[RMDB]
RNA sequence: GGGAACGACUCGAGUAGAGUCGAAAACAAUUGCAGAAGAACUUACAAACGCAGUUGGGCUUAUCACGUGACAAAGCAACAAAAUUAAAAGAAGAACUUUCUACGGUUGACAAAGGCACGUCAGCAGGUCAAAAGAAAUGGCUACAACUUACUAGAGUCGCGUAAUACAUUUCGAUGUAUUACGCGAAAAAGAAACAACAACAACAAC
Reactivity to DMS in 0.01 (KOAc 150mM, MgCl2 10mM, bicine 150mM(pH8.5), 24C), signal-to-noise 2, nucleotides 027 to 156: c030a050a150u000u000g000c010a090g010a040a140g010a110a060c040u000u000a170c080a060a050a110c090g020c090a070g020u020u000g030g020g010c010u000u000a120u000c070a040c040g010u020g090a070c080a010a130a140g010c000a010a190c020a010a050a100a120u010u010a040a030a090a170g010a090a090g020a110a110c060u000u000u010c010u010a100c090g000g010u000u000g000a120c040a060a080a110g030g010c020a060c040g020u010c040a080g010c070a060g010g010u000c020a010a080a100a090g010a050a050a120u010g020g020c000u000a060c040a020a070c020u010u000a070c040u010a070g010a150g060
Reactivity to 2A3 in 0.01 (KOAc 150mM, MgCl2 10mM, bicine 150mM(pH8.5), 24C), signal-to-noise 5, nucleotides 027 to 156: c020a000a070u070u080g010c060a010g030a190a020g050a060a050c060u110u140a070c100a120a120a020c090g010c030a020g000u040u030g020g020g010c000u060u050a060u180c060a030c080g060u060g050a040c040a030a110a010g070c000a020a050c030a040a090a110a080u200u230a110a130a040a000g060a030a010g030a050a070c030u060u080u000c030u060a050c080g040g000u020u030g020a020c010a040a050a030g050g020c030a000c030g010u030c010a020g010c020a010g000g050u060c020a050a080a040a000g080a010a080a000u060g010g030c000u030a030c020a080a040c020u090u130a040c030u070a030g050a040g160
An RNA of 207 nucleotides, treated with DMS and 2A3 and read out base by base.
It was measured as part of the RMDB library OK3TST.
2A3 adducts were read by reverse transcription with SuperScript II with manganese.
For DMS the reverse transcriptase was MarathonRT.